[RMDB]
Conditions: 150 mM KOAc, 10 mM MgCl2 and 150 mM bicine (pH 8.5), 24 C. Chemical mapping of a 177-nucleotide RNA with DMS and 2A3. Values cover nucleotides 27 to 126. High DMS reactivity at an A or C suggests that its Watson-Crick edge is free. It was measured as part of the RMDB library OK1LIB.

RNA sequence: GGGAACGACUCGAGUAGAGUCGAAAAGAAAGUAAAAAUUCAGCAUUCGUGUCUCCGAUAUCAUCAAUCAAGAGCUGGAUGUUGCUGGUAUCAACCACUUGCUGCCUUGGUCUUGGUGGGGAAGGAGCUGAGUAAGGAGCUUCGGCUCCUUACUCAGAAAAGAAACAACAACAACAAC
Reactivity to DMS in 0.01 (KOAc 150mM, MgCl2 10mM, bicine 150mM(pH8.5), 24C), signal-to-noise 2, nucleotides 027 to 126: g000a000a080a140g000u010a010a010a120a100a130u000u000c000a060g040c040a070u000u020c080g020u010g000u020c000u000c030c000g010a160u270a060u000c010a020u000c010a040a000u000c050a010a020g030a180g030c000u010g000g040a040u030g000u020u000g010c080u010g000g000u020a160u020c200a080a120c110c050a060c010u030u010g030c020u000g000c020c040u000u000g000g000u000c290u000u000g000g030u020g000g000g010g030a020a260g000g000a080g030
Reactivity to 2A3 in 0.01 (KOAc 150mM, MgCl2 10mM, bicine 150mM(pH8.5), 24C), signal-to-noise 3, nucleotides 027 to 126: g060a040a060a010g200u220a010a080a030a100a100u090u080c000a030g090c030a020u120u050c050g030u060g060u070c010u030c000c000g000a000u000a080u140c010a020u010c000a000a080u010c010a000a090g050a110g040c040u160g000g070a140u150g070u180u020g020c050u070g030g080u140a050u230c020a020a120c040c000a010c010u040u010g020c070u040g020c010c000u010u000g040g030u040c010u070u030g020g000u040g000g110g010g000a020a030g000g000a000g000